[RMDB]
The record gives the reactivity of an RNA of 177 nucleotides to DMS and 2A3. Source: RMDB library OK2TST, as collected in RNAgym. The reactions ran in a buffer of 150 mM KOAc, 10 mM MgCl2 and 150 mM bicine (pH 8.5), at 24 C. For 2A3, 1,823 sequencing reads were counted. The DMS profile rests on 1,015 reads.

RNA sequence: GGGAACGACUCGAGUAGAGUCGAAAAUGGAUUCGAAGAUUAUUGUACUUGUUGCUGGUGUGUUCCCAUAUAUGGAAAUUGAUAUCAGUGACACACUUCUACAAUACAAUCAAAGCCUUCUCAUGCACGAGGUAAUCAGUUUCGACUGAUUACCUCGAAAAGAAACAACAACAACAAC
Reactivity to DMS in 0.01 (KOAc 150mM, MgCl2 10mM, bicine 150mM(pH8.5), 24C), signal-to-noise 2, nucleotides 027 to 126: u000g020g010a040u000u000c170g000a070a040g010a130u000u000a050u000u000g020u000a040c170u000u010g030u000u000g010c060u020g020g000u010g050u010g000u000u000c080c010c100a090u000a070u000a100u000g030g020a020a070a080u030u030g030a050u000a040u000c080a100g000u000g000a010c000a030c300a050c110u000u000c020u000a010c000a010a010u000a010c020a030a060u000c100a040a110a060g010c090c010u000u000c010u000c010a090u020g030c160a220
Reactivity to 2A3 in 0.01 (KOAc 150mM, MgCl2 10mM, bicine 150mM(pH8.5), 24C), signal-to-noise 2, nucleotides 027 to 126: u070g000g020a020u040u060c050g000a060a000g010a080u060u070a050u030u070g000u030a040c060u030u020g000u020u000g020c030u000g010g070u010g020u010g010u000u030c020c030c030a030u060a000u010a010u120g080g060a020a040a030u080u130g030a030u010a000u110c020a020g000u000g060a010c000a000c000a010c050u080u100c030u020a020c010a030a000u010a020c000a010a040u010c030a060a010a030g050c010c000u060u020c020u000c000a060u200g070c060a040